[RMDB]
RNA sequence: GGGAACGACUCGAGUAGAGUCGAAAAGUUGCCAACGAAGACAACUUCGCUGUAGCCGCUUAAGGCUUAAGCCUCGAAACUGCUUGUGUCCGUGCUCGCAGCGUAGAGUCAUCAUCACGGAACCGCUGAGACGUGGCCGUCUGCCCAUCCUCGGUUACUUUCGAUUAAACUUCGGUUUAAUCGAAAGAAAAGAAACAACAACAACAAC
Reactivity to DMS in 0.01 (KOAc 150mM, MgCl2 10mM, bicine 150mM(pH8.5), 24C), signal-to-noise 1, nucleotides 027 to 156: g050u000u000g000c020c000a060a110c180g020a200a150g000a080c150a050a120c010u000u010c060g000c000u000g030u010a080g010c010c000g000c240u000u040a120a180g010g020c000u000u000a080a180g090c050c030u020c020g000a190a070a040c040u050g030c000u000u020g000u000g010u000c010c030g020u000g050c010u010c100g050c060a030g020c010g000u010a300g000a100g010u000c070a100u000c090a030u000c020a040c000g030g020a020a050c130c030g050c060u000g000a060g010a100c030g020u010g020g030c030c050g000u000c090u000g010c040c010c000a060u000c020c020u010c010g000g000u000u020a080
Reactivity to 2A3 in 0.01 (KOAc 150mM, MgCl2 10mM, bicine 150mM(pH8.5), 24C), signal-to-noise 4, nucleotides 027 to 156: g010u020u010g020c020c010a030a020c100g090a100a060g040a070c020a170a120c060u080u030c040g000c000u040g040u090a010g000c010c000g000c100u180u110a130a060g000g000c000u030u060a070a020g030c000c000u030c020g060a110a040a040c000u030g000c010u040u050g040u010g000u070c010c000g010u030g000c000u000c010g000c010a030g010c010g050u060a020g020a010g050u010c010a090u050c000a020u090c000a010c010g010g010a010a000c020c040g010c060u020g030a030g010a180c060g050u200g020g000c000c060g190u070c110u170g020c000c010c000a020u050c030c010u010c010g050g000u020u060a040

Chemical mapping of a 207-nucleotide RNA with DMS and 2A3. 2A3 adducts were read by reverse transcription with SuperScript II with manganese. DMS adducts were read by reverse transcription with MarathonRT. The RNA was probed in 150 mM KOAc, 10 mM MgCl2 and 150 mM bicine (pH 8.5) at 24 C. High 2A3 reactivity points to a flexible backbone, as in loops and unpaired stretches. For DMS, 2,563 sequencing reads were counted.